An RNA of 207 nucleotides, treated with 2A3 and DMS and read out base by base. For DMS, 2,823 sequencing reads were counted. 2A3 adducts were read by reverse transcription with SuperScript II with manganese. The 2A3 profile rests on 5,159 reads.
[RMDB]
RNA sequence: GGGAACGACUCGAGUAGAGUCGAAAACAAACAGAACUUCGGUUCUGUUUGAAAACCUUUGUGGUCGAGUGAACAACAGCUGUUCACAACCCAUUGGGUUGGAACAGACAUGUUCCUCGACCACUCUGGUAAAGAGAGUCUCGUUCGCGAGACUCUCGAUACAUGAGAGCUUCGGCUCUCAUGUAUCAAAAGAAACAACAACAACAAC
Reactivity to 2A3 in 0.01 (KOAc 150mM, MgCl2 10mM, bicine 150mM(pH8.5), 24C), signal-to-noise 6, nucleotides 027 to 156: c000a010a000a000c000a000g000a010a000c000u070u150c300g050g000u010u000c000u000g000u000u000u010g000a000a010a000a000c000c000u010u000u010g000u010g000g000u000c000g010a010g010u300g020a000a000c010a010a020c020a050g030c010u020g010u010u000c190a210c020a300a010c040c000c060a300u140u300g000g000g000u010u000g000g000a000a000c000a000g090a060c040a060u050g000u000u000c000c000u000c000g010a000c000c000a000c000u000c000u000g000g010u060a030a240a020g010a000g000a010g000u000c000u010c010g030u090u090c300g000c010g110a000g000a000c000u000c000u000c000
Reactivity to DMS in 0.01 (KOAc 150mM, MgCl2 10mM, bicine 150mM(pH8.5), 24C), signal-to-noise 1, nucleotides 027 to 156: c010a000a000a000c000a030g000a030a020c010u000u010c300g100g000u000u000c000u000g000u000u000u010g000a080a040a100a040c000c000u000u000u000g010u000g050g000u000c000g010a050g020u020g030a040a010c020a030a090c150a160g000c070u000g010u000u000c010a190c010a040a030c010c000c000a300u030u010g050g040g010u010u010g020g000a010a050c000a030g000a050c070a210u000g020u000u000c000c000u000c000g000a000c010c000a000c000u000c000u000g020g090u000a050a160a130g000a020g000a040g020u000c000u000c030g010u000u010c300g000c040g000a020g000a010c000u010c000u010c000